[RMDB]
RNA sequence: GGGAACGACUCGAGUAGAGUCGAAAAGAUAUGGACCAGAACUACGCACCGGGUUUCGUUGAAAUCUUUAGGUAACUCGGAAACGAGUUACCUAAAGAUGGAGAAACAGGUGCGCUGGUCCUAAGUCCUGUCUUUAAGACUUCGGUCUUAAAGACAGAAAAGAAACAACAACAACAAC
Reactivity to 2A3 in 0.01 (KOAc 150mM, MgCl2 10mM, bicine 150mM(pH8.5), 24C), signal-to-noise 1, nucleotides 027 to 126: g080a000u160a080u300g000g000a000c020c010a000g030a150a130c240u300a070c270g000c020a000c020c000g300g300g130u010u010u030c040g110u300u040g010a000a050a040u030c000u030u000u000a010g000g000u000a010a000c000u020c030g050g000a090a100a000c000g010a010g000u000u000a000c010c000u000a000a000a000g000a000u000g000g000a000g020a010a010a000c020a040g000g000u000g000c000g000c010u000g010g000u000c000c000u000a070a000g050u050c010
Reactivity to DMS in 0.01 (KOAc 150mM, MgCl2 10mM, bicine 150mM(pH8.5), 24C), signal-to-noise 1, nucleotides 027 to 126: g000a050u000a300u000g000g020a000c000c010a050g000a140a120c160u030a300c000g030c000a010c000c000g030g040g010u000u000u000c000g000u000u010g000a270a140a010u000c000u000u000u000a000g000g000u000a000a000c000u000c010g010g010a070a160a180c010g000a010g000u000u000a000c000c000u010a000a000a010g010a010u000g000g010a060g000a000a000a020c010a220g000g010u000g000c000g040c000u000g000g000u000c000c000u000a000a060g000u000c060